[RMDB]
RNA sequence: GGGAACGACUCGAGUAGAGUCGAAAACGCUCAGAAGACGGGCGAGCUAAACGACUACACAGUCUUUUGUUUAUGGGGUAAGAAAAACGAUAAGGUUUACUUUAUCGACGGCAUUCGCGGCAAGUGGGAAGCGCCUGAUAUGGAGAAACAAUUUACCCUACUCGUGAUCAUUCGUGAUCACGAGUAGAAAAGAAACAACAACAACAAC
Reactivity to 2A3 in 0.01 (KOAc 150mM, MgCl2 10mM, bicine 150mM(pH8.5), 24C), signal-to-noise 3, nucleotides 027 to 156: c010g020c010u060c020a090g020a150a050g080a080c050g000g010g000c040g010a020g010c010u110a120a110a060c060g030a040c040u220a110c110a020c050a040g020u000c000u040u070u050u110g060u040u080u030a130u080g040g020g000g010u030a040a040g050a090a040a030a010a000c010g010a010u040a060a050g040g000u050u120u120a070c000u010u040u010a020u020c000g020a020c000g010g000c040a070u070u110c080g000c000g070g050c020a070a050g060u120g040g000g020a040a020g060c070g020c080c030u050g010a020u020a030u150g020g030a060g060a030a080a000c040a020a020u090u080u080a100c020c040
Reactivity to DMS in 0.01 (KOAc 150mM, MgCl2 10mM, bicine 150mM(pH8.5), 24C), signal-to-noise 1, nucleotides 027 to 156: c020g010c080u000c000a090g000a060a110g000a040c050g000g140g050c080g020a170g000c010u010a100a070a190c130g000a060c020u000a100c070a080c060a110g020u000c010u020u020u000u000g000u000u010u000a160u010g030g020g020g010u000a040a190g020a050a060a070a050a120c010g020a040u000a050a060g020g040u000u010u000a130c000u000u000u000a020u000c000g030a150c150g020g020c020a130u000u000c050g000c020g000g020c060a060a130g000u020g000g000g000a130a090g030c100g000c050c000u020g020a100u000a080u010g020g000a090g000a110a150a070c020a040a090u020u000u000a050c050c100
Structure probing data (2A3 and DMS) for a 207-nucleotide construct. Source: RMDB library OK3TST, as collected in RNAgym.